The data come from the RNA Mapping Database (RMDB), library OK2TRN. Structure probing data (DMS and 2A3) for a 177-nucleotide construct.

RNA sequence: GGGAACGACUCGAGUAGAGUCGAAAAGCUCUCAGAACCCCAACCGGCAGUGCAGCGUCAACUUCAACAACAAGUAUCUGGCAGGCGACAUUCUGAAAGCAAAGUGUGGCGCGAGCAUCUUCAUAGAGUGGAGGAAUAAUUUCGAUUAUUCCUCCACAAAAGAAACAACAACAACAAC
Reactivity to DMS in 0.01 (KOAc 150mM, MgCl2 10mM, bicine 150mM(pH8.5), 24C), signal-to-noise 4, nucleotides 027 to 126: g010c100u000c010u000c030a130g020a130a200c060c020c000c040a100a130c110c060g000g010c070a060g010u000g020c050a150g010c040g030u000c040a060a060c050u010u010c080a050a080c100a090a050c110a050a080g010u010a050u000c060u000g000g010c030a050g010g000c050g000a060c070a080u010u000c050u000g000a040a050a090g000c120a080a050a050g020u000g010u010g010g010c040g020c040g000a060g040c030a050u000c040u020u000c050a080u010a070g030a270
Reactivity to 2A3 in 0.01 (KOAc 150mM, MgCl2 10mM, bicine 150mM(pH8.5), 24C), signal-to-noise 2, nucleotides 027 to 126: g020c000u000c010u000c030a020g090a190a160c000c040c000c010a020a030c000c020g060g080c020a050g000u010g000c020a030g020c010g000u020c000a010a020c000u120u110c060a090a100c010a030a030c000a140a000g020u020a090u080c030u050g070g010c020a030g000g110c020g050a010c010a000u140u000c030u080g080a140a090a010g020c040a060a000a030g150u170g010u020g020g000c000g000c000g020a030g010c010a050u070c000u130u090c040a100u100a110g110a010
Reactivities are given for positions 27 through 126. For DMS the reverse transcriptase was MarathonRT.